Overview:
Structure probing data (2A3) for a 207-nucleotide construct. The reactions ran in a buffer of 150 mM KOAc, 10 mM MgCl2 and 150 mM bicine (pH 8.5), at 24 C. Reactivities are given for positions 27 through 156.
RNA sequence: GGGAACGACUCGAGUAGAGUCGAAAAGCAACAGAUAACUGGAUGCAGCGUAGGAUUCUACGCAUAUCCAGUACGAAUGGUACCUGUAAAGAAAAUAAUCUUGGAUGUACAAGUACCAACAAGGGGUUAAGCGAUGGUGAUGUCAAUCACAUUUGCACCUGAGGUAUCCAUUCGUGGAUACCUCAGGAAAAGAAACAACAACAACAAC
Reactivity to 2A3 in 0.01 (KOAc 150mM, MgCl2 10mM, bicine 150mM(pH8.5), 24C), signal-to-noise 1, nucleotides 027 to 156: g030c000a020a090c000a020g020a110u020a210a000c000u010g000g000a000u050g060c100a100g040c090g000u000a000g000g100a240u250u270c000u020a000c000g000c130a000u010a000u000c020c000a000g000u000a070c030g050a040a080u150g040g000u010a000c000c000u030g000u030a000a050a020g140a060a040a040a020u210a080a110u070c000u030u050g110g130a060u070g070u120a000c000a000a000g000u000a020c000c030a000a080c030a040a000g200g040g000g040u120u040a090a010g000c020g060a030u020g130g070u010g030a020u070g030u160c130a110a000u030c000a000c000a000u060u070u210g020c030a010